RNA sequence: GGGAACGACUCGAGUAGAGUCGAAAAUUUUGAAGAUUAACUGUCACCAUCUGGGACGUGCUUAGAUGCCUGGUAUCUUGAAGUGCAGGCUAAGUAUUUGCAAACACAGUCUUUAUCAAGUGCCUGCGCCAGAGUAUGCCGUGCCACUCGACGUCAAGCCCCAUUAGGUAUUCGUACCUAAUGGGGCAAAAGAAACAACAACAACAAC
Reactivity to 2A3 in 0.01 (KOAc 150mM, MgCl2 10mM, bicine 150mM(pH8.5), 24C), signal-to-noise 2, nucleotides 027 to 156: u080u070u050u020g040a050a010g010a070u130u100a160a040c050u080g080u080c010a020c080c010a080u080c100u110g030g030g030a000c000g000u030g020c020u070u100a070g050a060u090g020c000c070u070g000g000u030a040u130c040u000u020g000a080a000g030u020g000c000a000g020g000c000u020a080a000g020u020a110u020u180u150g060c010a170a090a000c110a120c140a200g030u050c000u020u050u040a140u070c020a050a130g150u020g130c000c000u010g000c010g030c010c000a000g000a040g000u160a080u100g000c010c030g000u090g000c000c020a010c000u120c000g020a020c000g050u140c050a080a000